[RMDB]
Background:
The record gives the reactivity of an RNA of 177 nucleotides to DMS and 2A3. Values cover nucleotides 27 to 126. For 2A3, 4,303 sequencing reads were counted.
RNA sequence: GGGAACGACUCGAGUAGAGUCGAAAAGAUAUGGACCCAACAAGCUUAGAUUUUGUGGCUAAGGUUAACCAUGUCGGAAACGACAUGGUUAACUAUGCCACAUGUCAGCUUGUUUGGGUCCUAAGUCCUACGAUGAUUAGUUCGCUAAUCAUCGUAGAAAAGAAACAACAACAACAAC
Reactivity to DMS in 0.01 (KOAc 150mM, MgCl2 10mM, bicine 150mM(pH8.5), 24C), signal-to-noise 3, nucleotides 027 to 126: g010a090u000a300u000g020g000a010c000c000c000a010a010c010a010a010g020c000u000u010a140g010a020u000u010u000u000g020u000g000g030c010u000a110a300g000g010u000u000a010a000c000c000a000u000g010u000c000g010g010a110a120a200c010g000a020c000a010u000g000g000u000u000a000a000c000u000a290u010g000c000c000a010c000a000u010g010u000c000a030g000c000u000u000g000u000u010u010g000g010g010u000c000c000u000a000a100g010u000c030
Reactivity to 2A3 in 0.01 (KOAc 150mM, MgCl2 10mM, bicine 150mM(pH8.5), 24C), signal-to-noise 2, nucleotides 027 to 126: g030a000u110a050u230g000g000a010c050c000c000a000a000c010a000a000g080c050u250u300a060g010a040u300u300u130u240g000u020g000g000c010u040a130a270g040g000u000u010a010a000c000c000a000u010g000u000c030g000g030a080a100a020c040g000a000c000a000u000g000g000u000u020a000a010c000u000a000u020g000c000c000a000c010a000u000g000u010c010a000g020c000u030u010g000u010u050u060g000g020g020u010c000c000u010a000a000g000u010c000